RNA sequence: GGGAACGACUCGAGUAGAGUCGAAAACGAGCAGAUCCAGUUCAUCAAGCUCUUCGGCAUGGCCAAGAUUGACAACCUGUUGCAGGAGAUGCUGCUGGGAGGUCCGUGCCAAGCCCAGGAGGGGCGAGGAUGCUAUGCAUUUCGAUGCAUAGCAUCCAAAAGAAACAACAACAACAAC
Reactivity to DMS in 0.01 (KOAc 150mM, MgCl2 10mM, bicine 150mM(pH8.5), 24C), signal-to-noise 4, nucleotides 027 to 126: c070g010a080g010c040a080g010a110u010c020c030a110g000u000u000c090a110u000c110a080a130g010c010u010c010u000u010c140g010g010c000a090u000g000g010c040c040a120a120g000a150u010u020g020a040c100a070a140c030c010u000g000u000u000g000c020a010g000g010a180g010a110u000g010c030u000g010c020u000g010g000g000a060g000g020u010c010c110g020u010g000c020c010a040a090g020c000c010c220a110g010g000a070g000g010g000g040c080g000a090
Reactivity to 2A3 in 0.01 (KOAc 150mM, MgCl2 10mM, bicine 150mM(pH8.5), 24C), signal-to-noise 4, nucleotides 027 to 126: c050g000a020g050c030a010g000a100u010c060c010a010g050u060u090c020a080u070c030a100a010g000c010u010c000u030u030c040g020g010c020a030u030g030g000c010c010a040a050g120a300u150u270g020a040c010a020a060c010c000u120g120u300u090g040c020a010g020g120a300g050a120u170g080c000u010g000c000u020g010g000g000a030g000g070u040c050c010g010u040g020c000c010a010a020g010c010c000c010a020g080g100a030g010g000g000g000c020g000a070
Structure probing data (DMS and 2A3) for a 177-nucleotide construct. Conditions: 150 mM KOAc, 10 mM MgCl2 and 150 mM bicine (pH 8.5), 24 C. The 2A3 profile rests on 6,038 reads.